[RMDB]
RNA sequence: GGGAACGACUCGAGUAGAGUCGAAAAGCAACCACCUUCGGGUGGUUGCAAAUGACGAUGCACGAUGACGAAGACGAAGAUGCUGAAGACGACGACGAACAUAAAGACCCACGUUCGCGUGGGUCAACAAAUGCAUGGUGUUCGCACCAUGCAUUUGAAAAGAAACAACAACAACAAC
Reactivity to DMS in 0.01 (KOAc 150mM, MgCl2 10mM, bicine 150mM(pH8.5), 24C), signal-to-noise 4, nucleotides 027 to 126: g000c000a010a000c000c000a020c000c010u000u010c200g040g020g040u010g000g010u000u000g010c000a010a040a060u010g010a090c090g010a060u000g020c010a090c050g010a070u010g020a070c040g000a090a080g010a100c060g010a090a050g000a070u010g030c020u000g020a070a060g000a070c030g000a070c040g010a070c040g000a080a110c130a090u010a070a090a110g000a020c000c000c000a010c020g010u000u010c200g010c010g040u000g000g020g010u000c000a010a070
Reactivity to 2A3 in 0.01 (KOAc 150mM, MgCl2 10mM, bicine 150mM(pH8.5), 24C), signal-to-noise 3, nucleotides 027 to 126: g000c000a010a020c010c000a000c010c000u040u070c140g120g000g000u000g000g010u010u000g010c000a000a000a000u060g010a010c040g030a050u060g020c010a010c040g060a040u080g030a020c020g050a110a010g030a030c030g010a020a020g040a050u070g010c040u050g040a030a020g050a030c050g000a010c030g010a010c020g050a080a040c050a060u190a130a170a020g000a010c020c000c010a010c000g000u030u040c160g010c000g090u000g000g000g000u000c000a000a000